[RMDB]
The data come from the RNA Mapping Database (RMDB), library OK1LIB. Chemical mapping of a 177-nucleotide RNA with 2A3. The reactions ran in a buffer of 150 mM KOAc, 10 mM MgCl2 and 150 mM bicine (pH 8.5), at 24 C.
RNA sequence: GGGAACGACUCGAGUAGAGUCGAAAAGAACCGCCAGAAAGGCGGAAAUCCAGGGGCCAGAAAAGAAGCCUUACCAUAGAGGCCUCUGUCAGGUAAUGGUAAACCUGCGAACUAUGGUAAUGCAAAAGCUCACGCAUUAUUUCGAUAAUGCGUGAGCAAAAGAAACAACAACAACAAC
Reactivity to 2A3 in 0.01 (KOAc 150mM, MgCl2 10mM, bicine 150mM(pH8.5), 24C), signal-to-noise 2, nucleotides 027 to 126: g020a070a040c000c000g000c000c000a110g140a250a110a010g020g000c000g020g000a080a010a010u020c020c000a000g040g000g000g000c000c040a110g090a030a180a100a010g160a090a010g010c000c000u000u000a010c000c000a000u000a000g000a000g030g000c000c000u000c000u000g050u040c000a000g010g000u120a170a170u300g110g130u100a260a100a000c000c000u030g040c080g040a070a010c010u000a000u010g010g000u000a020a020u000g000c000a020a020a020a020